[RMDB]
RNA sequence: GGGAACGACUCGAGUAGAGUCGAAAACGGAUCGGUGAUUAUCUGCAAUCCGAAUAACCCACUGGGUACGGCGUUCACCGAAGCCGAGCUACGUGCGAUUGUGGAUAUCGCGGCCCGCCACGGCGCCCCUAGUCGUAUAGUUCGCUAUACGACUAGGAAAAGAAACAACAACAACAAC
Reactivity to DMS in 0.01 (KOAc 150mM, MgCl2 10mM, bicine 150mM(pH8.5), 24C), signal-to-noise 7, nucleotides 027 to 126: c020g000g000a030u000c020g010g020u000g010a060u010u010a040u010c040u000g010c060a050a030u000c010c070g010a130a110u010a100a090c080c090c010a110c160u000g010g000g000u000a140c020g010g010c030g020u000u010c060a080c120c070g010a070a140g010c020c010g000a280g010c040u000a040c200g010u010g010c080g000a030u000u000g020u000g000g010a040u000a020u000c020g020c010g010g000c020c010c020g000c030c020a090c080g000g010c050g000c090c070
Reactivity to 2A3 in 0.01 (KOAc 150mM, MgCl2 10mM, bicine 150mM(pH8.5), 24C), signal-to-noise 7, nucleotides 027 to 126: c020g000g020a050u050c030g110g030u090g040a100u070u230a030u080c020u030g020c020a010a020u000c010c030g050a050a100u130a100a060c030c010c030a110c140u200g020g000g030u070a040c010g000g020c060g070u070u120c110a090c170c090g040a080a020g010c010c010g020a030g030c040u090a060c070g100u090g020c070g020a020u020u040g010u060g030g020a010u020a010u080c020g000c000g030g000c020c010c000g010c050c020a060c050g080g000c040g060c020c010
This 177-nucleotide RNA was probed chemically with DMS and 2A3.
Conditions: 150 mM KOAc, 10 mM MgCl2 and 150 mM bicine (pH 8.5), 24 C.
2A3 adducts were read by reverse transcription with SuperScript II with manganese.
It was measured as part of the RMDB library OK2TST.
For DMS, 9,963 sequencing reads were counted.
For DMS the reverse transcriptase was MarathonRT.